About this RNA
The record gives the reactivity of an RNA of 177 nucleotides to DMS and 2A3.
RNA sequence: GGGAACGACUCGAGUAGAGUCGAAAACUGACCGUGCUGGAGUACUUCAUCAACACCCACGGCGCUCGAAAGGGCUUGGCGGACACCGCGUUGCGCACCGCCGACUCCGGCUACCUGACCCGACGUCGCAAUAAUGCAGAUUCGUCUGCAUUAUUGCAAAAGAAACAACAACAACAAC
Reactivity to DMS in 0.01 (KOAc 150mM, MgCl2 10mM, bicine 150mM(pH8.5), 24C), signal-to-noise 5, nucleotides 027 to 126: c090u000g000a130c050c050g000u000g010c080u000g020g010a070g030u000a070c150u010u000c110a080u000c120a080a070c120a120c040c020c020a100c050g010g010c070g020c030u000c030g000a090a090a100g010g000g020c080u000u010g000g010c000g000g000a070c070a080c070c040g000c040g010u000u010g000c010g010c080a060c000c010g020c000c010g000a040c040u000c010c010g020g010c040u000a060c040c050u010g020a120c030c020c030g020a100c160g000u010c080
Reactivity to 2A3 in 0.01 (KOAc 150mM, MgCl2 10mM, bicine 150mM(pH8.5), 24C), signal-to-noise 4, nucleotides 027 to 126: c030u040g060a090c020c040g050u050g000c020u050g020g020a040g030u040a130c030u050u150c030a160u060c040a060a060c010a080c060c030c000a020c030g040g000c040g030c010u040c020g110a110a080a080g010g000g000c000u070u110g030g000c040g040g030a130c040a050c120c030g020c080g180u160u210g050c020g010c040a030c010c000g000c010c000g030a010c010u000c010c000g020g010c000u030a030c000c030u030g070a080c010c010c010g060a080c050g080u100c060
Reactivities are given for positions 27 through 126. For DMS, 5,160 sequencing reads were counted.